RNA sequence: GGGAACGACUCGAGUAGAGUCGAAAACUCGAACAUCGGUGGGGUGACAUCUGCUGUCGAAGAUGCACAUGGGUUGAAAAUUACCGCACAACUUGACCUCGACAACCCUAAAGCCAAACAGGUCUACACCCUGAUGAAAGCAAAACGACUCUCGCAACCGACCUUCUACUUUCGAGUAGAAGGUCGGAAAAGAAACAACAACAACAAC
Reactivity to 2A3 in 0.01 (KOAc 150mM, MgCl2 10mM, bicine 150mM(pH8.5), 24C), signal-to-noise 1, nucleotides 027 to 156: c020u000c010g020a070a020c000a050u120c030g190g000u260g100g030g000g000u000g050a070c000a040u010c030u050g000c000u020g020u080c000g010a070a000g010a080u040g000c010a060c010a050u050g000g000g090u000u000g050a000a000a260a260u210u080a170c010c020g060c010a130c050a050a010c050u100u150g060a010c020c000u000c010g060a050c020a030a020c000c000c000u120a190a140a000g030c080c020a090a120a190c120a150g040g030u020c000u130a060c070a030c060c000c090u120g000a040u010g040a130a050a000g050c020a000a060a110a000c010g100a040c000u000c000u000c020g000c040a080a000
Conditions: 150 mM KOAc, 10 mM MgCl2 and 150 mM bicine (pH 8.5), 24 C. An RNA of 207 nucleotides, treated with 2A3 and read out base by base. The data come from the RNA Mapping Database (RMDB), library OK3TST.